[RMDB]
RNA sequence: GGGAACGACUCGAGUAGAGUCGAAAAGUGACACUGUUCGCAGUGUCACAAAGUGGUGGAUCUAGAACCACAAUAACUAGAUCAAAGAUCUAGUCUACAUCAAAAGCAUACAGUUCGCUGUAUGCAACUCUGUAUUCUAGUUCGCUAGAAUACAGAGAAAAGAAACAACAACAACAAC
Reactivity to DMS in 0.01 (KOAc 150mM, MgCl2 10mM, bicine 150mM(pH8.5), 24C), signal-to-noise 8, nucleotides 027 to 126: g010u000g000a020c000a010c000u010g010u000u010c210g040c010a010g020u000g010u000c000a000c000a030a060a100g010u000g000g010u000g000g010a110u010c110u000a130g010a170a040c000c000a010c010a110a080u010a080a030c000u000a010g000a010u000c010a140a130a140g010a040u000c000u000a010g000u000c100u000a100c200a090u010c150a050a070a110a130g000c000a010u000a000c000a010g000u000u010c220g020c000u000g000u000a000u000g000c000a040a050
Reactivity to 2A3 in 0.01 (KOAc 150mM, MgCl2 10mM, bicine 150mM(pH8.5), 24C), signal-to-noise 9, nucleotides 027 to 126: g000u000g000a000c000a000c000u010g020u050u080c170g010c100a000g000u000g000u010c000a000c000a000a020a000g030u030g020g010u010g030g060a110u040c060u130a100g050a110a030c000c000a000c010a000a010u130a020a010c010u000a000g000a010u020c080a220a270a070g010a010u000c010u000a000g050u010c050u140a140c050a150u200c080a040a080a030a050g010c000a000u010a000c000a010g020u030u070c140g050c110u000g000u000a000u000g000c000a000a010